Source: RMDB libraries RFM100 and RFMREP, as collected in RNAgym. The record gives the reactivity of an RNA of 177 nucleotides to 2A3 and DMS.
[RMDB]
RNA sequence: GGGAACGACUCGAGUAGAGUCGAAAAGGCCAUGCUCUCCACAGGCUUUCUUGAACUGUGAACUCGUGUGUGCAUGCUCCUCAUAUAUUGUUCUAGAUCCCAUGCAUGAUGCAUAUCGAUCGAUCUGGAACGUGAGAGACUUCGGUCUCUCACGUUCAAAAGAAACAACAACAACAAC
Reactivity to 2A3 in 0.01 (KOAc 150mM, MgCl2 10mM, bicine 150mM(pH8.5), 24C), signal-to-noise 2, nucleotides 027 to 126: g050g000c030c000a020u020g000c010u000c000u000c060c000a000c000a000g030g030c000u130u120u070c050u060u200g110a120a040c010u020g000u000g050a040a030c030u040c120g060u100g020u020g050u050g060c000a010u020g000c000u000c020c000u110c060a010u090a020u020a010u180u190g040u060u000c000u030a030g030a030u020c000c020c020a010u030g000c010a070u230g070a060u170g150c020a000u020a050u080c060g030a090u070c060g000a010u010c000u000g020
Reactivity to DMS in 0.01 (KOAc 150mM, MgCl2 10mM, bicine 150mM(pH8.5), 24C), signal-to-noise 2, nucleotides 027 to 126: g020g000c300c070a020u000g000c040u000c080u000c020c080a030c070a030g000g000c130u000u010u080c110u030u010g010a110a060c010u000g010u010g000a140a050c130u020c080g050u000g040u030g010u000g010c030a030u010g010c070u000c010c030u000c070a110u080a100u040a130u020u000g000u000u000c000u000a050g000a030u000c000c190c130a020u000g010c000a270u020g010a120u030g010c000a020u000a090u020c170g010a100u010c080g000a010u000c080u000g000
Notes:
Values cover nucleotides 27 to 126. 2A3 adducts were read by reverse transcription with SuperScript II with manganese. The reactions ran in a buffer of 150 mM KOAc, 10 mM MgCl2 and 150 mM bicine (pH 8.5), at 24 C. For DMS the reverse transcriptase was MarathonRT.